[RMDB]
RNA sequence: GGGAACGACUCGAGUAGAGUCGAAAACGGUCGGUGGAAUUUUGCAGGAAUGAGUGAUAAGGCGCUAGAACGUGCCUAUGAUGAGAUUAAAAGCAAAGGUCGUACUCAAGUAUUUGGCAAUCAUGUUUACACUAGUGACUAUGUAAAAAAAGCUAAGGUAUUAUCGCUGUUUCGACAGCGAUAAUACAAAAGAAACAACAACAACAAC
Reactivity to 2A3 in 0.01 (KOAc 150mM, MgCl2 10mM, bicine 150mM(pH8.5), 24C), signal-to-noise 4, nucleotides 027 to 156: c050g020g010u040c040g040g020u050g010g090a130a110u060u080u070u150g030c060a050g010g070a100a070u100g020a070g040u060g070a050u050a120a060g020g020c020g000c020u020a050g070a230a070c100g020u010g000c000c010u030a050u070g040a030u030g000a000g010a060u060u190a080a090a040a000g010c050a070a020a010g050g030u040c030g010u040a040c020u010c050a070a050g030u040a190u080u090u070g040g000c020a030a040u030c020a080u070g080u030u050u050a040c070a030c040u040a030g020u000g080a020c040u070a070u210g000u240a000a100a040a000a000a000a000g040c050u070a070a020g070
Reactivity to DMS in 0.01 (KOAc 150mM, MgCl2 10mM, bicine 150mM(pH8.5), 24C), signal-to-noise 2, nucleotides 027 to 156: c060g020g050u000c050g020g040u010g020g020a050a090u000u010u030u000g030c050a060g000g020a080a090u000g000a080g050u000g000a130u000a100a070g000g030c010g010c030u000a100g020a080a070c100g030u000g020c010c020u020a050u000g020a110u000g020a140g000a130u000u000a030a060a110a100g000c060a040a110a100g030g010u000c050g010u020a110c040u000c040a020a120g010u010a080u000u010u000g030g000c020a100a070u000c120a050u000g020u000u000u000a050c100a080c010u000a090g050u000g010a130c060u000a030u000g000u000a010a000a060a070a050a070a110g020c060u020a040a120g010